[RMDB]
RNA sequence: GGGAACGACUCGAGUAGAGUCGAAAAUCCGAUAGGUGAGGUCAUCCAAGGUAAGUGGUGCCAAAGGCACCCGCCUCACCGCCCGCAAGGGUAGAACAGGGAGGAGGUAAACGCUAGUUCGCUAGCGCGAUACUACAUCCUUCGGGAUGUAGUAUCGAAAAGAAACAACAACAACAAC
Reactivity to 2A3 in 0.01 (KOAc 150mM, MgCl2 10mM, bicine 150mM(pH8.5), 24C), signal-to-noise 3, nucleotides 027 to 126: u020c000c000g000a110u090a100g040g000u000g000a010g000g020u010c030a100u110c120c090a130a110g030g000u020a010a010g000u020g110g020u020g010c030c060a210a090a110g040g000c000a000c000c000c010g000c000c000u000c000a010c000c000g000c000c000c000g030c040a060a100g040g000g000u040a050g030a120a030c050a050g010g070g010a040g010g050a060g040g010u100a080a080a010c010g000c000u000a010g020u040u060c170g010c150u010a000g020c000g000
Reactivity to DMS in 0.01 (KOAc 150mM, MgCl2 10mM, bicine 150mM(pH8.5), 24C), signal-to-noise 5, nucleotides 027 to 126: u000c010c010g020a140u010a070g020g010u000g010a000g010g010u000c020a080u010c190c250a120a300g000g000u000a010a000g010u010g000g020u000g010c000c030a090a140a120g020g010c000a010c010c000c010g000c000c000u000c000a000c000c000g010c010c010c010g000c290a090a140g000g000g010u000a040g020a080a070c110a090g000g000g010a060g000g000a060g000g020u000a040a070a130c040g000c000u000a000g010u000u020c230g020c010u000a010g000c010g000

Description:
Structure probing data (2A3 and DMS) for a 177-nucleotide construct. It was measured as part of the RMDB library RFMREP. The reactions ran in a buffer of 150 mM KOAc, 10 mM MgCl2 and 150 mM bicine (pH 8.5), at 24 C. Values cover nucleotides 27 to 126. For DMS the reverse transcriptase was MarathonRT. High 2A3 reactivity points to a flexible backbone, as in loops and unpaired stretches.